An RNA of 177 nucleotides, treated with 2A3 and DMS and read out base by base. Reactivities are given for positions 27 through 126. As a SHAPE reagent, 2A3 marks flexible, mostly unpaired nucleotides at the ribose 2'-OH. The 2A3 profile rests on 1,689 reads. Values are in units of 0.01, from 0 to 300, in steps of 10. The reactions ran in a buffer of 150 mM KOAc, 10 mM MgCl2 and 150 mM bicine (pH 8.5), at 24 C.

[RMDB]
RNA sequence: GGGAACGACUCGAGUAGAGUCGAAAAAGGGAAACCUGAAAACAAAUUGGGGCUCAGAGCUUCUUCCACCUGCCCGUUAACAUUCGAAAAUGUCAAGGUUCCAGAAGCCAAUAUCUUGGGACAAAUAAUAGUUUUAAUGAUUCGUCAUUAAAACUAUAAAAGAAACAACAACAACAAC
Reactivity to 2A3 in 0.01 (KOAc 150mM, MgCl2 10mM, bicine 150mM(pH8.5), 24C), signal-to-noise 2, nucleotides 027 to 126: a020g010g010g010a010a010a070c010c000u030g040a100a030a070a050c040a010a150a110u190u100g030g010g040g010c040u050c080a040g000a020g030c020u020u020c000u110u010c030c020a020c000c010u030g010c000c000c000g020u040u070a050a030c020a100u050u110c050g070a170a000a060a010u040g030u060c050a050a020g130g000u010u020c000c000a010g020a030a000g060c030c010a060a060u150a040u070c090u070u090g000g000g000a030c060a040a090a000u240a040
Reactivity to DMS in 0.01 (KOAc 150mM, MgCl2 10mM, bicine 150mM(pH8.5), 24C), signal-to-noise 4, nucleotides 027 to 126: a030g010g000g000a090a070a160c020c000u000g010a080a080a210a150c130a060a120a120u010u010g010g020g010g000c160u010c080a070g000a110g020c020u000u000c030u000u000c030c020a090c030c030u010g000c040c000c020g010u010u000a070a050c030a030u000u010c160g000a090a050a080a050u000g000u000c180a100a080g010g020u000u000c070c050a040g010a060a060g020c060c090a090a060u000a040u000c050u000u000g020g000g000a080c060a040a080a110u010a090